An RNA of 177 nucleotides, treated with DMS and read out base by base. For DMS the reverse transcriptase was MarathonRT. The DMS profile rests on 1,304 reads.
RNA sequence: GGGAACGACUCGAGUAGAGUCGAAAAGAUAUGGAUCCAGGAGCUAGCUGAAUACAUCGGAAACGAUGUACAGCUUGGACCUCCGGAUCCUAAGUCAAACGUAACUAUGCUUCGGCAUAGUUACGAAUCACAGCUAGUUCUUCGGAACUAGCUGUGAAAAAGAAACAACAACAACAAC
Reactivity to DMS in 0.01 (KOAc 150mM, MgCl2 10mM, bicine 150mM(pH8.5), 24C), signal-to-noise 2, nucleotides 027 to 126: g000a010u000a250u010g020g000a010u010c000c020a080g010g000a030g010c000u000a000g000c000u000g010a300a160u000a020c000a000u000c000g010g010a100a080a110c000g000a010u000g000u000a010c010a000g000c020u000u010g030g000a070c300c010u000c010c000g010g000a000u000c000c000u000a000a050g000u000c030a120a100a300c010g010u020a000a000c000u010a010u000g010c000u000u000c280g030g000c000a000u000a000g000u000u000a010c000g000a020a050